Background:
Conditions: 150 mM KOAc, 10 mM MgCl2 and 150 mM bicine (pH 8.5), 24 C. Chemical mapping of a 207-nucleotide RNA with 2A3.

RNA sequence: GGGAACGACUCGAGUAGAGUCGAAAAGCCAGCACUAAGCCGGACGGCGCCCUCGCACCAGUUCCGCUGUGGGUUCGCCUACAAGAACGUACGGUGUUGAGGCCCUGUCCGCCGCUGCGCUGCCACCUACUCUCGCGCCGCUAGUCGAGCGGACUCCGUCGAUUGUAUGGUUCGCCAUACAAUCGACAAAAGAAACAACAACAACAAC
Reactivity to 2A3 in 0.01 (KOAc 150mM, MgCl2 10mM, bicine 150mM(pH8.5), 24C), signal-to-noise 1, nucleotides 027 to 156: g010c000c000a000g000c000a050c120u250a000a030g070c070c010g000g000a010c000g010g030c100g000c040c050c020u010c000g000c000a000c000c000a030g010u000u010c000c000g000c060u010g000u020g000g020g030u040u060c210g140c030c000u010a010c010a070a140g020a020a000c010g040u200a020c090g000g000u040g000u070u300g010a020g010g000c000c020c010u010g010u010c000c000g000c000c000g020c000u000g020c100g010c040u070g000c030c010a020c000c000u080a070c000u070c000u000c100g120c070g020c070c010g000c030u060a040g160u240c090g070a010g010c020g000g030a020c010u030c040c100
Record summary:
Values cover nucleotides 27 to 156.